[RMDB]
This 207-nucleotide RNA was probed chemically with 2A3. Values are in units of 0.01, from 0 to 300, in steps of 10. 2A3 adducts were read by reverse transcription with SuperScript II with manganese. The data come from the RNA Mapping Database (RMDB), library OK3TST. The RNA was probed in 150 mM KOAc, 10 mM MgCl2 and 150 mM bicine (pH 8.5) at 24 C.
RNA sequence: GGGAACGACUCGAGUAGAGUCGAAAAAGCGCAUCUAGAGAGAUUGUACUCGUUGAGGCUAGUGUGUCUCUCAACGAGAGUCUCUCUAGAUAUGGAGAGUGAGUGUGUUGAGAAGACACACUAGCACUCAACACAUACCUCACUCUCUAUACACGCACGUCACCGUACUAUUCGUAGUACGGUGACGAAAAGAAACAACAACAACAAC
Reactivity to 2A3 in 0.01 (KOAc 150mM, MgCl2 10mM, bicine 150mM(pH8.5), 24C), signal-to-noise 2, nucleotides 027 to 156: a000g020c020g000c030a070u090c040u080a020g000a000g000a000g070a070u120u150g110u070a040c050u090c200g030u000u020g010a000g010g000c040u020a000g010u000g010u030g000u000c000u000c000u010c030a010a000c000g020a020g000a000g110u010c010u000c020u000c000u000a000g020a040u050a030u150g010g000a000g000a000g000u080g030a080g090u190g010u050g010u090u010g010a010g030a140a040g010a020c000a010c000a000c010u000a010g000c000a010c000u000c000a000a000c000a000c000a000u060a040c000c090u030c010a080c010u030c010u000c010u000a020u030a010c100a000c030g000c010a010